[RMDB]
Background: Conditions: 150 mM KOAc, 10 mM MgCl2 and 150 mM bicine (pH 8.5), 24 C. Structure probing data (DMS and 2A3) for a 207-nucleotide construct. For 2A3 the reverse transcriptase was SuperScript II with manganese.
RNA sequence: GGGAACGACUCGAGUAGAGUCGAAAACACAGGAUCUUCCCCACUCUGUAUGCUAUCUUCCAGCAGAGCAGAGGCCAGGAACAGGAGCUGAAAAUAAAAAACAGAUCUCUGCGCUCCCUCACCCGCAGCUGUCUGUAUCACAAAAGCGAAGAUCAGCCAUGAGGAGUAGUUUCGACUACUCCUCAUGAAAAGAAACAACAACAACAAC
Reactivity to DMS in 0.01 (KOAc 150mM, MgCl2 10mM, bicine 150mM(pH8.5), 24C), signal-to-noise 3, nucleotides 027 to 156: c050a110c050a080g000g020a090u000c040u000u010c010c030c010c020a150c020u000c010u010g000u000a090u000g000c030u020a110u000c090u000u010c140c050a120g030c000a070g010a110g020c030a070g020a110g010g010c030c060a050g060g000a140a100c050a080g000g000a070g000c030u000g000a070a080a060a150u040a040a120a070a130a100a100c050a030g010a040u000c080u010c020u000g020c050g000c030u000c030c020c020u010c020a080c040c010c030g020c040a080g050c040u000g010u010c020u010g020u000a110u000c070a130c080a060a060a080a110g020c080g010a070a060g010a060u000c030a080g000c090
Reactivity to 2A3 in 0.01 (KOAc 150mM, MgCl2 10mM, bicine 150mM(pH8.5), 24C), signal-to-noise 3, nucleotides 027 to 156: c080a010c030a020g090g050a080u020c050u010u050c020c000c000c010a030c010u050c000u010g020u040a060u060g010c020u010a070u210c080u130u060c100c040a010g000c000a010g040a070g090c020a000g000a010g010g000c020c030a060g020g050a090a060c020a060g030g030a020g040c020u050g040a030a010a180a150u240a030a120a040a050a020a020c010a000g030a060u070c050u000c000u080g030c030g030c040u070c000c020c000u030c020a040c000c000c000g000c030a010g000c010u030g030u080c010u020g040u050a090u120c070a030c040a130a050a060a020g050c050g020a020a000g020a070u040c020a000g060c050